This 207-nucleotide RNA was probed chemically with 2A3.
RNA sequence: GGGAACGACUCGAGUAGAGUCGAAAAACGAGUCGUACGCGACUCAAAUGGUAUUGUCGGCGUAAAAGAACAAGACGUCACCGGACGCGACCGGGCUAAAAAGCGAAACGUCAUCUACGGAUGACGAAAAACGGACCUGGGUUCGCCCAGGUCCGAACAUGUAAUCUGGCUUCGGCCAGAUUACAUGAAAAGAAACAACAACAACAAC
Reactivity to 2A3 in 0.01 (KOAc 150mM, MgCl2 10mM, bicine 150mM(pH8.5), 24C), signal-to-noise 1, nucleotides 027 to 156: a000c050g010a000g000u000c000g000u020a010c260g000c000g080a000c000u000c010a020a040a030u090g030g010u120a120u140u190g160u120c050g020g010c000g010u040a040a050a110a040g060a120a080c030a070a080g140a020c000g010u040c000a000c010c000g010g010a010c000g000c010g030a000c000c000g020g000g030c020u050a000a000a000a030a000g000c000g030a140a040a000c000g000u000c000a000u000c000u000a000c120g120g000a000u000g000a000c000g020a040a040a000a000a000c010g000g000a000c020c000u000g040g000g060u040u130c110g100c070c000c000a000g010g010u010c000c000g000a000a000
Values are in units of 0.01, from 0 to 300, in steps of 10. It was measured as part of the RMDB library M2RFPK. For 2A3 the reverse transcriptase was SuperScript II with manganese.